[RMDB]
RNA sequence: GGGAACGACUCGAGUAGAGUCGAAAAGCUUUUUUUUCGGAUUAGGCGUGGAGGCGAAAGUCACCCUCCUCGCAUCGCAAGUUCGUGCUUGCGACUUACACGUAGGGCGAGGGGUGGGCGAAAGAUGAAAACACGAUGUUGUUCGCAACAUCGUGAAGUAUUGGCCUAAGUUCGCUUAGGCCAAUACAAAAGAAACAACAACAACAAC
Reactivity to 2A3 in 0.01 (KOAc 150mM, MgCl2 10mM, bicine 150mM(pH8.5), 24C), signal-to-noise 3, nucleotides 027 to 156: g010c000u040u070u110u020u040u020u070u140c070g070g000a140u150u040a040g060g000c000g000u010g010g000a000g010g010c040g070a160a060a030g160u090c050a090c000c000c010u020c000c020u010c010g000c010a040u020c000g000c000a000a020g020u260u300c180g230u300g150c010u000u010g000c000g000a000c000u050u100a050c050a010c150g150u110a050g030g040g030c100g040a080g000g020g020g030u160g000g000g020c030g050a040a080a000g100a030u180g050a130a000a000a000c010a000c000g000a000u000g000u000u000g000u020u020c150g010c110a000a000c000a000u000c000g000u000g000a000a000
The record gives the reactivity of an RNA of 207 nucleotides to 2A3. The reactions ran in a buffer of 150 mM KOAc, 10 mM MgCl2 and 150 mM bicine (pH 8.5), at 24 C. 2A3 adducts were read by reverse transcription with SuperScript II with manganese. It was measured as part of the RMDB library M2RFPK.